[RMDB]
RNA sequence: GGGAACGACUCGAGUAGAGUCGAAAACGCUGCGAUUCCGGGGUCAUUAGACAAGCAAUUGGCAGCACUUGAGCAUAGUGCUAACGGUCGUUUAGGUAUUGCGAUGAUUAAUACCGCCAAUGGCACCGGCAACGCAGUGAUUCGUCACUGCGUUGCCAAAAGAAACAACAACAACAAC
Reactivity to 2A3 in 0.01 (KOAc 150mM, MgCl2 10mM, bicine 150mM(pH8.5), 24C), signal-to-noise 1, nucleotides 027 to 126: c020g000c030u020g050c020g210a230u090u000c010c000g020g000g000g000u010c020a040u070u090a080g070a090c040a050a010g020c020a010a090u030u000g050g010c020a020g000c000a020c010u060u060g170a070g090c000a030u030a110g040u000g000c000u010a040a040c000g030g070u070c050g020u040u020u070a000g000g020u020a000u040u050g080c150g180a240u150g000a020u060u220a000a010u020a060c000c000g040c020c010a000a000u030g000g040c000a000c020c020
Reactivity to DMS in 0.01 (KOAc 150mM, MgCl2 10mM, bicine 150mM(pH8.5), 24C), signal-to-noise 1, nucleotides 027 to 126: c100g000c090u000g000c060g000a120u000u000c000c010g000g000g000g000u000c000a050u000u010a070g000a030c190a080a120g000c040a030a010u020u020g000g010c300a020g000c000a020c020u000u000g020a240g040c160a050u000a020g000u000g010c000u010a070a290c080g020g000u000c040g020u000u000u000a090g010g030u000a000u000u000g000c080g010a190u010g010a190u000u000a010a010u000a020c000c000g000c050c030a010a050u000g010g010c010a000c070c000
An RNA of 177 nucleotides, treated with 2A3 and DMS and read out base by base. The RNA was probed in 150 mM KOAc, 10 mM MgCl2 and 150 mM bicine (pH 8.5) at 24 C. Reactivities are rounded to 0.1 and cut off at 0 and 3. 2A3 adducts were read by reverse transcription with SuperScript II with manganese. Reactivities are given for positions 27 through 126.